[RMDB]
RNA sequence: GGGAACGACUCGAGUAGAGUCGAAAACACGGAUGUUUUUAUCACUACCGUGGCCCUUAGUGAUAAAAACAUAGGGCAGCCUUAGGUACGGUGGACAUGCGAAAGCAUGUCCAUCGUACUUAAGGCAGCAGGAUGUAGGGUUCGCCCUACAUCCUGCAAAAGAAACAACAACAACAAC
Reactivity to DMS in 0.01 (KOAc 150mM, MgCl2 10mM, bicine 150mM(pH8.5), 24C), signal-to-noise 1, nucleotides 027 to 126: c040a120c080g010g000a030u010g000u000u000u000u000u000a000u000c000a020c000u000a050c210c140g000u010g020g000c080c020c030u000u000a010g030u000g000a000u000a010a010a020a030a000c000a010u000a060g000g010g050c110a150g020c000c000u000u010a010g000g010u000a000c000g020g020u000g000g020a010c010a000u000g030c000g000a160a100a130g010c000a010u010g010u000c000c000a000u000c000g010u000a000c000u000u000a000a010g000g010c000a010
An RNA of 177 nucleotides, treated with DMS and read out base by base. Values cover nucleotides 27 to 126. The DMS profile rests on 2,567 reads.